An RNA of 177 nucleotides, treated with DMS and read out base by base. Reactivities are given for positions 27 through 126. For DMS the reverse transcriptase was MarathonRT. For DMS, 1,481 sequencing reads were counted.

RNA sequence: GGGAACGACUCGAGUAGAGUCGAAAAUUGCGACGGGUCGAAGGUGUUGUCGUUGGCCAUCGCGAGCACCUCGCCGGUCUUGGCGUCCAGGACGACGGCCGAGACGUUGUGAGCCCCCGAUAGGUUCCUCCGGAAGCUAUUUCGAUAGCUUCCGGAGAAAAGAAACAACAACAACAAC
Reactivity to DMS in 0.01 (KOAc 150mM, MgCl2 10mM, bicine 150mM(pH8.5), 24C), signal-to-noise 1, nucleotides 027 to 126: u000u000g000c030g000a030c040g000g010g010u010c020g000a100a080g010g010u000g000u010u010g010u000c020g050u010u000g020g010c040c080a140u000c050g030c020g010a020g010c090a060c030c010u000c010g020c040c070g000g020u000c030u000u000g000g010c040g000u000c010c140a190g030g000a140c190g010a030c000g040g030c000c010g030a060g010a050c000g000u000u000g020u000g010a070g010c040c010c010c070c030g000a160u010a120g000g000u010u010c030